[RMDB]
RNA sequence: GGGAACGACUCGAGUAGAGUCGAAAAGAUAUGGAAUAUGCUCAGAUCUUCAACAGCUCGGAAACGAGACAUGAAGUGAGACCCAUAUUCCUAAGUCAAAAGUGAUACUACUUCGGUAGUAUCACAACUAGAAGUACCUCUUCGGAGGUACUUCUAGAAAAGAAACAACAACAACAAC
Reactivity to 2A3 in 0.01 (KOAc 150mM, MgCl2 10mM, bicine 150mM(pH8.5), 24C), signal-to-noise 2, nucleotides 027 to 126: g020a020u050a070u120g020g040a030a050u040a020u200g030c000u010c030a090g060a300u030c010u020u020c010a100a130c040a220g060c010u000c010g010g070a040a070a070c020g010a000g060a070c010a130u120g000a000a020g010u030g040a010g000a010c020c000c010a010u010a000u030u020c000c000u020a130a010g140u050c060a090a010a070a110g010u010g000a000u010a020c000u010a000c000u000u050c220g100g010u000a000g000u000a000u000c010a000c010a000a010
Reactivity to DMS in 0.01 (KOAc 150mM, MgCl2 10mM, bicine 150mM(pH8.5), 24C), signal-to-noise 3, nucleotides 027 to 126: g000a030u000a300u010g000g000a070a040u000a020u010g010c300u000c010a040g020a070u000c000u010u000c010a040a120c300a140g000c010u000c000g010g000a100a070a250c010g010a010g000a040c110a180u000g010a010a010g010u000g000a280g000a010c190c150c020a010u000a010u010u000c000c000u000a060a110g010u020c050a060a050a130a150g010u000g000a010u000a000c000u000a000c000u000u010c230g060g010u000a000g000u000a000u000c000a010c000a020a080